RNA sequence: GGGAACGACUCGAGUAGAGUCGAAAAGCCAGUCAGAGGGGGCUACCAUGCAAACUAGGGCUGGCUACUCUUGCACAGAAUCACCUUUCUAUAAUAACCAGUGCAAGAAGGGUUAUUAUACCAUUUAAAAAUCGUGAAUGCUUCGGCAUUCACGAAACAUCACUUCUCCCUUCGGGGAGAAGUGAUGAAAAGAAACAACAACAACAAC
Reactivity to 2A3 in 0.01 (KOAc 150mM, MgCl2 10mM, bicine 150mM(pH8.5), 24C), signal-to-noise 1, nucleotides 027 to 156: g000c000c000a000g000u010c000a000g010a020g110g000g000g070g000c000u130a250c170c080a200u300g020c010a040a050a000c000u000a000g060g020g000c000u000g010g010c030u000a000c010u010c000u000u010g010c030a010c020a010g130a140a060u110c050a130c070c000u090u300u080c130u070a000u000a010a000u000a010a010c000c000a000g010u000g000c000a000a000g000a000a000g000g020g000u010u010a000u000u030a010u010a020c010c010a120u120u170u300a060a140a030a030a050u030c000g010u000g000a010a000u000g010c000u010u030c090g030g000c010a000u000u020c000a000c000g000a000a000a000
This 207-nucleotide RNA was probed chemically with 2A3. The 2A3 profile rests on 479 reads. Reactivities are rounded to 0.1 and cut off at 0 and 3. The reactions ran in a buffer of 150 mM KOAc, 10 mM MgCl2 and 150 mM bicine (pH 8.5), at 24 C.